[RMDB]
RNA sequence: GGGAACGACUCGAGUAGAGUCGAAAAGGCCACUUCUUCGGAAGUGGCCAAAGGGAAACCAAGCAGUACGUUCGUAUACGUACAGCAAAAAUAAAUACGAUAAAAGACUCAGCUUCGGCUGAGUCAAGAUUAGAUGAGUGUUCGCACUCAUCUAAUCAAAAGAAACAACAACAACAAC
Reactivity to 2A3 in 0.01 (KOAc 150mM, MgCl2 10mM, bicine 150mM(pH8.5), 24C), signal-to-noise 4, nucleotides 027 to 126: g000g000c000c000a000c000u000u010c010u020u060c160g120g000a000a000g000u000g000g020c010c000a000a000a000g000g000g010a050a010a020c010c000a020a030g100c020a030g010u010a000c000g000u000u060c080g020u100a050u020a060c000g000u000a000c030a020g050c010a000a090a070a020a000u180a030a070a010u090a040c020g060a020u110a220a160a010a030g000a000c000u000c000a000g000c010u040u180c280g150g000c000u000g000a000g000u000c000a000a000
Reactivity to DMS in 0.01 (KOAc 150mM, MgCl2 10mM, bicine 150mM(pH8.5), 24C), signal-to-noise 3, nucleotides 027 to 126: g000g000c020c000a000c000u000u010c000u010u010c170g030g030a010a000g040u000g010g000c000c030a010a010a020g000g000g020a130a090a300c040c020a110a130g020c110a100g040u000a010c000g000u000u010c260g010u000a050u000a040c000g000u000a000c010a080g000c040a020a040a040a080a050u010a040a030a070u000a040c090g000a210u030a050a050a140a170g000a030c000u000c000a010g000c000u010u000c150g030g000c000u000g000a010g010u000c000a010a020
Structure probing data (2A3 and DMS) for a 177-nucleotide construct. Reactivities are given for positions 27 through 126. The reactions ran in a buffer of 150 mM KOAc, 10 mM MgCl2 and 150 mM bicine (pH 8.5), at 24 C. For 2A3, 8,470 sequencing reads were counted. It was measured as part of the RMDB library M2PK50. DMS adducts were read by reverse transcription with MarathonRT.